Chemical mapping of a 207-nucleotide RNA with 2A3. The RNA was probed in 150 mM KOAc, 10 mM MgCl2 and 150 mM bicine (pH 8.5) at 24 C. Values cover nucleotides 27 to 156. For 2A3 the reverse transcriptase was SuperScript II with manganese. The data come from the RNA Mapping Database (RMDB), library OK3TST.

RNA sequence: GGGAACGACUCGAGUAGAGUCGAAAAAAUGAUGAUGUUGACCAGAGUUUGAUCAUCGCUGCCAGAAACAUUGUUAGGAGAGCAACAGUAUCAGCGGACCCACUGGCAUCACUCUUGGAGAUGUGUCACAGCACACAAAUUGGGGGAAUAAGGAUGGGACCUAGCGAUUAUUCGUAAUCGCUAGGUCAAAAGAAACAACAACAACAAC
Reactivity to 2A3 in 0.01 (KOAc 150mM, MgCl2 10mM, bicine 150mM(pH8.5), 24C), signal-to-noise 2, nucleotides 027 to 156: a000a000u280g060a050u000g000a000u020g020u160u060g130a080c050c020a050g010a010g030u000u180u300g100a120u050c010a020u080c030g020c060u030g010c070c030a030g020a060a100a060c060a040u040u060g000u100u110a080g030g030a040g060a000g020c040a020a070c040a020g050u070a020u180c100a030g040c000g010g010a070c000c030c000a030c030u010g000g040c010a010u030c010a030c000u050c020u050u090g090g040a050g010a060u030g030u010g010u000c020a020c030a170g020c070a000c000a010c000a030a030a290u190u080g010g010g000g000g040a000a050u100a040a020g090g000a040u050g070g000